Chemical mapping of a 177-nucleotide RNA with DMS.
[RMDB]
RNA sequence: GGGAACGACUCGAGUAGAGUCGAAAAGAUAUGGACAAGCCCAGGGAGCCAUGGUAUUACCAUGGAUCGGAAACGAUCCAUGGUAAUACCAUGGAACUACUCCCUGGGAACUACUUGUCCUAAGUCAGUAGCAUAAACAGUUCGCUGUUUAUGCUACAAAAGAAACAACAACAACAAC
Reactivity to DMS in 0.01 (KOAc 150mM, MgCl2 10mM, bicine 150mM(pH8.5), 24C), signal-to-noise 2, nucleotides 027 to 126: g010a060u000a300u010g010g000a030c000a010a000g000c000c000c000a010g010g000g000a000g010c010c010a000u000g020g000u000a010u000u000a030c000c010a040u000g000g000a000u010c000g020g010a130a140a260c000g000a020u000c000c000a010u000g000g000u000a000a000u010a000c000c000a020u020g010g010a000a000c060u010a300c010u000c010c000c000u010g000g000g000a010a010c040u020a300c000u010u000g020u000c000c010u000a040a130g010u010c060a080
Source: RMDB library TTRINS, as collected in RNAgym.
DMS adducts were read by reverse transcription with MarathonRT.
The RNA was probed in 150 mM KOAc, 10 mM MgCl2 and 150 mM bicine (pH 8.5) at 24 C.